Annotation: Chemical mapping of a 207-nucleotide RNA with 2A3. 2A3 adducts were read by reverse transcription with SuperScript II with manganese. The reactions ran in a buffer of 150 mM KOAc, 10 mM MgCl2 and 150 mM bicine (pH 8.5), at 24 C. It was measured as part of the RMDB library RNAMAK.
[RMDB]
RNA sequence: GGGAACGACUCGAGUAGAGUCGAAAAGGGGUCGUUCCGAGGUGUCUUGGAUUUAGCCUCGAGGCUGAAGCCUCCACGGCUACCCACCGAGGCUUGUCAGACACCGGCGAACGACGGAGGCACCCAAAAGUUAAGAAGUGUUCGCACUUCUUAACAACCAUGCAAGGAGGUUCGCCUCCUUGCAUGGAAAAGAAACAACAACAACAAC
Reactivity to 2A3 in 0.01 (KOAc 150mM, MgCl2 10mM, bicine 150mM(pH8.5), 24C), signal-to-noise 2, nucleotides 027 to 156: g080g000g050g000u000c000g000u000u020c000c000g000a150g000g000u000g000u040c070u190u290g220g030a120u300u270u300a010g020c000c000u010c000g000a070g030g060c130u170g060a220a000g000c000c000u160c150c210a100c090g020g000c000u040a050c000c020c000a070c070c010g000a000g000g000c000u010u030g020u030c000a000g020a000c000a010c010c000g010g020c100g010a010a000c010g020a010c060g010g050a030g060g010c110a050c010c000c030a010a080a010a010g000u000u000a000a010g000a000a010g010u000g020u050u110c190g050c100a010c000u020u020c000u020u010a000a000c000a000a030